[RMDB]
RNA sequence: GGGAACGACUCGAGUAGAGUCGAAAAGAUAUGGAGGCAUCUUUUGACGAGCGACGAGUCGGAAACGACUCCAAGCUCGAUAAGAUGCUCCUAAGUCAAAACACCCAUCUGUUCGCAGAUGGGUGAACGCCUCAAUAUGGUUCGCCAUAUUGAGGCGAAAAGAAACAACAACAACAAC
Reactivity to 2A3 in 0.01 (KOAc 150mM, MgCl2 10mM, bicine 150mM(pH8.5), 24C), signal-to-noise 1, nucleotides 027 to 126: g030a010u060a060u120g000g020a000g160g220c020a010u020c030u020u160u120u240g300a160c030g010a000g000c010g030a030c060g000a000g020u000c020g000g010a020a010a020c000g000a020c010u030c020c000a040a000g010c000u010c000g000a000u000a010a000g000a010u010g000c000u000c000c000u000a050a020g080u020c030a040a010a130a130c000a000c020c000c000a010u020c000u010g100u080u120c300g000c120a000g000a000u000g000g040g000u000g000a000a000
Reactivity to DMS in 0.01 (KOAc 150mM, MgCl2 10mM, bicine 150mM(pH8.5), 24C), signal-to-noise 2, nucleotides 027 to 126: g000a050u000a300u020g000g000a010g020g050c000a010u000c000u000u000u000u020g050a190c040g000a000g000c020g020a300c300g000a010g000u000c040g020g010a100a080a170c000g000a000c000u010c000c030a020a300g000c010u000c000g060a010u000a080a000g010a020u000g010c000u000c000c000u000a020a170g000u000c010a110a080a100a160c000a010c000c000c000a000u000c000u000g040u030u020c220g010c010a010g010a000u000g000g020g010u000g020a000a030